[RMDB]
RNA sequence: GGGAACGACUCGAGUAGAGUCGAAAACAAACUUGACAAUUCACUUACCCACGAGCAAAUAGAGGGUUGGAGAAGAAUGUUUACCACUGACUCAAAGUUUGCUGAAGCUGUAAAAAAAGAGGUUACAAUCCACUAUGGAGUUCGCUCCAUAGUGGAUAAAAGAAACAACAACAACAAC
Reactivity to 2A3 in 0.01 (KOAc 150mM, MgCl2 10mM, bicine 150mM(pH8.5), 24C), signal-to-noise 1, nucleotides 027 to 126: c000a020a050a030c030u090u010g060a070c030a000a300u110u050c010a070c060u070u110a060c010c040c050a020c110g070a040g000c020a000a020a040u050a020g050a070g000g000g000u010u010g040g040a050g000a140a000g060a150a140u140g040u140u200u050a080c040c030a030c030u000g010a010c000u010c040a040a000a000g000u000u000u000g000c000u020g010a070a030g000c110u110g080u190a070a080a000a000a000a020a140g100a060g080g000u020u030a030c090a100
Reactivity to DMS in 0.01 (KOAc 150mM, MgCl2 10mM, bicine 150mM(pH8.5), 24C), signal-to-noise 3, nucleotides 027 to 126: c030a040a130a120c080u000u010g050a050c090a090a090u010u010c060a080c060u000u010a100c020c010c030a140c270g010a090g010c030a030a010a020u000a060g010a300g000g000g010u000u000g000g000a080g020a090a120g000a060a110u000g000u000u010u000a160c110c050a070c040u000g000a010c010u000c010a020a220a240g000u020u000u000g000c020u000g000a060a180g010c080u000g000u020a000a000a000a090a060a050a080g000a060g020g000u000u000a070c150a110